[RMDB]
RNA sequence: GGGAACGACUCGAGUAGAGUCGAAAAGCUCGGAGACGAGCAAGGCUGACAAAACGCUGUCCCAACCUCCACGUGGUGUCGGCUGGAUAAUGCUGCAUUAUGUUGCAUUUAUCAACUGGGAAUAAAAGACUGAGCGACGAUUCGUCGUCGCUCAGUCAAAAGAAACAACAACAACAAC
Reactivity to 2A3 in 0.01 (KOAc 150mM, MgCl2 10mM, bicine 150mM(pH8.5), 24C), signal-to-noise 2, nucleotides 027 to 126: g030c030u020c000g000g070a090g030a080c030g030a000g000c030a000a050g070g000c030u000g000a010c000a040a030a000a100c010g000c090u220g010u000c020c010c000a000a030c010c010u070c050c000a070c060g000u040g000g020u070g010u010c000g060g000c070u030g040g000a020u010a070a010u030g000c000u010g030c050a110u180u000a160u300g060u010u050g000c000a060u000u140u190a000u050c000a000a070c080u140g000g070g000a080a000u080a140a080a030a000